Structure probing data (2A3 and DMS) for a 177-nucleotide construct. Values cover nucleotides 27 to 126.
RNA sequence: GGGAACGACUCGAGUAGAGUCGAAAAAAGGACAGAAUAACGGGCUCCCAGAUUCACAAGCCCCACCAAGAGGAUCACCCCAGGAACGCUUGGAGGCUGAGGAGUUCACUGAGGCUACUGCAUCUUGACCAGUACUCUGUUUCGACAGAGUACUGGUAAAAGAAACAACAACAACAAC
Reactivity to 2A3 in 0.01 (KOAc 150mM, MgCl2 10mM, bicine 150mM(pH8.5), 24C), signal-to-noise 3, nucleotides 027 to 126: a000a000g100g020a050c020a010g090a090a060u110a270a000c060g000g000g000c000u000c000c000c010a000g020a010u040u060c090a060c000a300a000g000c000c080c000c000a050c060c060a090a010g060a140g090g010a020u180c120a160c020c000c000c050a020g040g000a140a020c060g000c020u010u010g000g000a010g070g000c000u010g030a120g070g000a000g000u030u030c000a000c020u090g050a050g110g000c020u100a060c030u090g020c030a030u000c000u040u030g000
Reactivity to DMS in 0.01 (KOAc 150mM, MgCl2 10mM, bicine 150mM(pH8.5), 24C), signal-to-noise 1, nucleotides 027 to 126: a040a180g000g000a050c070a020g000a030a000u080a160a120c090g050g000g000c000u010c000c040c010a080g000a070u030u020c070a020c160a150a080g000c000c040c000c070a070c050c000a160a100g000a120g000g040a290u000c210a110c030c000c000c020a050g040g040a070a030c270g060c000u000u000g000g000a010g040g000c000u000g030a110g020g000a030g080u000u060c020a070c000u000g000a040g000g040c090u020a060c020u000g000c080a070u000c070u000u000g020
The reactions ran in a buffer of 150 mM KOAc, 10 mM MgCl2 and 150 mM bicine (pH 8.5), at 24 C.
For DMS, 1,190 sequencing reads were counted.
DMS adducts were read by reverse transcription with MarathonRT.